[RMDB]
RNA sequence: GGGAACGACUCGAGUAGAGUCGAAAACGCUGGGUAUGGGAGAAGCUGAACAUGGGAGGCUCAAGUACCUGAAGCGCGCACGGGUACUUGAGCCGAGGAUCAUGUUUCAGCGUAACCAUACCUGUGCUGAAGCGCGCACGGCAACCGAAAGGUGCGACACCCCACCAUAGUUCGCUAUGGUGGGGUGAAAAGAAACAACAACAACAAC
Reactivity to 2A3 in 0.01 (KOAc 150mM, MgCl2 10mM, bicine 150mM(pH8.5), 24C), signal-to-noise 1, nucleotides 027 to 156: c070g000c040u110g000g030g000u000a010u000g000g020g050a110g010a090a000g020c000u010g010a000a000c000a010u000g000g000g000a000g000g000c000u000c000a000a000g000u040a000c000c000u010g030a120a050g020c020g000c000g050c010a020c080g020g000g020u000a000c040u010u000g000a000g000c000c000g000a000g000g000a000u010c000a000u020g080u070u090u300c020a000g000c000g000u000a000a010c000c000a000u000a000c010c000u000g000u040g010c050u120g030a110a050g010c000g000c000g040c040a000c030g130g000c030a050a120c020c010g030a110a040a010g000g020u050g010c020g110a020

The record gives the reactivity of an RNA of 207 nucleotides to 2A3. The reactions ran in a buffer of 150 mM KOAc, 10 mM MgCl2 and 150 mM bicine (pH 8.5), at 24 C. For 2A3, 1,202 sequencing reads were counted. 2A3 adducts were read by reverse transcription with SuperScript II with manganese.